[RMDB]
RNA sequence: GGGAACGACUCGAGUAGAGUCGAAAAGAAAUUCCCGAUCGGCGGUAAAGUCCCCGAGCCGAACGAAAAAGGUUUGGCAGGAACCGGUGAGAUUCCGGUACCGACAGUAUAGUCUGGAUGGAAGAAGGUAGCCUCCUCUCGUUCGCGAGAGGAGGAAGCUUCACCUAAAGUUCGCUUUAGGUGAAGCAAAAGAAACAACAACAACAAC
Reactivity to DMS in 0.01 (KOAc 150mM, MgCl2 10mM, bicine 150mM(pH8.5), 24C), signal-to-noise 1, nucleotides 027 to 156: g000a080a120a230u000u000c000c010c000g000a050u000c020g000g000c080g010g020u000a070a110a140g000u020c000c010c000c100g000a140g010c010c000g000a040a300c030g020a030a060a130a210a260g020g050u010u000u010g010g060c000a130g000g010a170a020c000c010g050g050u000g000a180g000a300u000u010c020c000g040g000u000a020c020c000g050a050c040a150g020u000a150u000a080g010u000c040u020g010g000a080u020g020g010a050a180g000a150a060g000g030u010a070g000c020c000u010c000c000u000c020u000c000g040u000u010c220g000c020g000a020g000a020g020g000a000g040g010a020a020
Reactivity to 2A3 in 0.01 (KOAc 150mM, MgCl2 10mM, bicine 150mM(pH8.5), 24C), signal-to-noise 1, nucleotides 027 to 156: g010a010a070a000u030u000c010c000c050g010a140u070c010g030g000c050g000g080u050a090a000a070g040u030c020c010c020c020g010a030g030c010c010g020a020a030c020g160a100a100a050a050a050g120g000u000u000u030g010g000c000a010g050g020a000a000c000c000g000g000u020g010a020g000a000u080u000c000c000g010g000u000a010c020c000g030a000c010a020g050u080a070u170a220g140u040c090u070g030g030a030u100g030g010a120a070g010a030a050g090g010u100a060g060c010c000u010c000c000u060c000u000c010g030u080u010c260g000c010g090a000g000a000g030g050a000g000g010a000a000